Chemical mapping of a 177-nucleotide RNA with DMS. The reactions ran in a buffer of 150 mM KOAc, 10 mM MgCl2 and 150 mM bicine (pH 8.5), at 24 C.
[RMDB]
RNA sequence: GGGAACGACUCGAGUAGAGUCGAAAAAAAAAAAGAUAUGGACCCAUGAACUACUCCGUGGACUUUCGCGCUCGGAAACGAGCGAACUACGAAAGUACACGGAGCAUGGGUCCUAAGUCAAAAAAAACAAGGUAUUAAAGUUCGCUUUAAUACCUUGAAAAGAAACAACAACAACAAC
Reactivity to DMS in 0.01 (KOAc 150mM, MgCl2 10mM, bicine 150mM(pH8.5), 24C), signal-to-noise 1, nucleotides 027 to 126: a000a000a050a110a080a130a060g000a060u000a300u000g010g020a030c010c010c010a000u000g000a060a050c140u050a300c020u000c010c000g050u000g000g010a010c000u000u000u010c000g070c020g040c000u000c000g040g000a070a080a160c000g020a030g000c050g000a050a060c070u010a300c010g010a000a000a000g000u000a020c000a000c030g000g190a050g000c020a000u000g000g020g010u000c000c000u000a000a070g040u050c000a050a000a000a040a100a100a080a140
Reactivities are given for positions 27 through 126. Source: RMDB library TTRDES, as collected in RNAgym. DMS adducts were read by reverse transcription with MarathonRT.